This 177-nucleotide RNA was probed chemically with 2A3 and DMS.
DMS adducts were read by reverse transcription with MarathonRT.
For 2A3, 7,169 sequencing reads were counted.
The RNA was probed in 150 mM KOAc, 10 mM MgCl2 and 150 mM bicine (pH 8.5) at 24 C.
Source: RMDB library RFMREP, as collected in RNAgym.

RNA sequence: GGGAACGACUCGAGUAGAGUCGAAAAGCCUCGGCGCCUCGGGAUCGGCGAUCUUCCUAUCAGGUCGUUGGCGGGGUAAUGGCCCACCAAGCCGAAGACGGGUAGCGGGUGUGAGAGCACGACCCGCCUCAAAAUACAUCUUCGGAUGUAUUUUGAGAAAAGAAACAACAACAACAAC
Reactivity to 2A3 in 0.01 (KOAc 150mM, MgCl2 10mM, bicine 150mM(pH8.5), 24C), signal-to-noise 4, nucleotides 027 to 126: g030c000c000u010c030g030g010c040g010c000c000u030c020g030g030g110a210u090c020g020g010c010g030a040u020c010u080u060c020c010u090a110u250c080a020g010g010u010c020g010u040u030g040g040c020g000g000g000g020u030a070a080u150g050g020c010c000c000a010c010c030a050a020g000c000c010g030a040a020g080a050c060g060g000g010u040a020g020c000g000g050g000u020g000u020g020a260g010a040g200c020a010c050g060a030c020c010c010g010c000
Reactivity to DMS in 0.01 (KOAc 150mM, MgCl2 10mM, bicine 150mM(pH8.5), 24C), signal-to-noise 4, nucleotides 027 to 126: g010c050c020u000c050g020g010c020g000c030c010u000c040g020g040g020a090u010c040g010g010c020g010a050u000c040u020u010c070c100u010a080u010c110a080g000g010u000c090g010u000u000g010g020c020g000g000g000g000u000a080a100u000g010g000c020c010c020a090c070c080a050a250g020c000c010g000a060a080g010a070c070g000g000g010u000a090g010c030g000g010g010u000g000u000g000a200g010a120g000c040a050c030g000a050c010c000c000g000c050